[RMDB]
About this RNA:
Source: RMDB library OK3TST, as collected in RNAgym. This 207-nucleotide RNA was probed chemically with 2A3 and DMS. For DMS the reverse transcriptase was MarathonRT. For 2A3, 5,506 sequencing reads were counted. The reactions ran in a buffer of 150 mM KOAc, 10 mM MgCl2 and 150 mM bicine (pH 8.5), at 24 C.
RNA sequence: GGGAACGACUCGAGUAGAGUCGAAAACGCCUACAUGAAGCGGAGGCGGCUGGACUUAACAAAGAAUGGGCGCUUAAAGUUGCCUAUCUUGAAAUAACGCUUGAUGACGCAUUAGGCGCUAUGGAUAUGGAUCAAGAAAGUAGCGUGAUGCUUGCUGGUUUUGGAAUUAAUUCGUUAAUUCCAAAACAAAAGAAACAACAACAACAAC
Reactivity to 2A3 in 0.01 (KOAc 150mM, MgCl2 10mM, bicine 150mM(pH8.5), 24C), signal-to-noise 7, nucleotides 027 to 156: c040g010c000c010u050a050c050a130u160g060a060a010g030c040g030g040a010g030g020c010g000g020c050u060g030g020a070c020u070u100a100a040c070a090a070a020g070a090a080u070g010g010g000c030g020c040u160u230a130a120a080g110u230u250g040c000c000u020a020u020c020u010u040g050a040a070a060u080a050a020c030g010c020u020u030g030a020u050g040a080c070g000c110a030u030u040a040g070g000c000g000c020u010a020u060g020g010a030u030a050u200g100g000a050u110c060a060a050g060a100a090a020g050u030a010g020c030g020u040g040a040u060g020c030u060u070g020c050u100g020
Reactivity to DMS in 0.01 (KOAc 150mM, MgCl2 10mM, bicine 150mM(pH8.5), 24C), signal-to-noise 4, nucleotides 027 to 156: c030g020c010c000u000a100c050a130u000g010a110a150g010c040g010g010a100g010g030c030g030g000c070u000g000g010a110c050u000u010a090a160c090a100a090a100g000a080a090u000g010g020g020c010g010c040u000u010a050a100a130g020u000u010g040c000c010u010a040u000c020u000u000g010a170a130a060u000a030a040c030g000c000u000u010g020a050u000g000a150c120g030c070a090u000u000a050g020g020c020g010c010u000a020u000g010g000a210u000a050u010g020g010a120u000c030a050a080g000a070a050a110g010u000a040g020c010g040u000g000a140u000g000c020u010u010g010c020u010g000
The DMS profile rests on 8,700 reads.